[RMDB]
RNA sequence: GGGAACGACUCGAGUAGAGUCGAAAAUGAACGUGCGUACAUCUCUCUCAGACUGUACGACAGUCUGACUCUCUCGCACUCUAGUUCCACGAGAGUGAGAGAGCGUUGGAACUAGGGUGAAAUGAAAUCUCAGAGACGUAUUCGUACGUCUCUGAGAAAAAGAAACAACAACAACAAC
Reactivity to 2A3 in 0.01 (KOAc 150mM, MgCl2 10mM, bicine 150mM(pH8.5), 24C), signal-to-noise 1, nucleotides 027 to 126: u200g010a040a020c100g060u100g060c000g020u060a020c010a050u040c000u000c000u000c000u000c090a020g010a010c080u010g050u080a070c020g000a040c040a020g040u000c040u040g010a000c000u000c000u000c050u020c070g040c030a000c000u000c000u000a010g000u010u010c000c000a000c000g060a080g000a010g050u150g080a070g010a000g000a030g020c020g070u070u060g000g000a000a000c000u000a000g010g000g000u000g020a110a030a010u200g020a050a020a090
Reactivity to DMS in 0.01 (KOAc 150mM, MgCl2 10mM, bicine 150mM(pH8.5), 24C), signal-to-noise 2, nucleotides 027 to 126: u000g000a050a070c030g020u010g050c010g010u020a030c040a070u020c040u010c010u010c070u000c050a280g010a050c150u000g010u010a050c110g020a100c040a100g000u020c010u010g000a060c070u010c020u010c010u000c050g000c050a020c000u000c010u000a000g010u000u010c000c000a030c020g020a050g010a140g000u000g020a120g010a060g000a080g000c080g000u010u010g010g000a020a010c000u010a020g000g000g000u000g010a030a080a060u010g000a070a080a060
Conditions: 150 mM KOAc, 10 mM MgCl2 and 150 mM bicine (pH 8.5), 24 C. Chemical mapping of a 177-nucleotide RNA with 2A3 and DMS. For DMS the reverse transcriptase was MarathonRT. The DMS profile rests on 1,904 reads.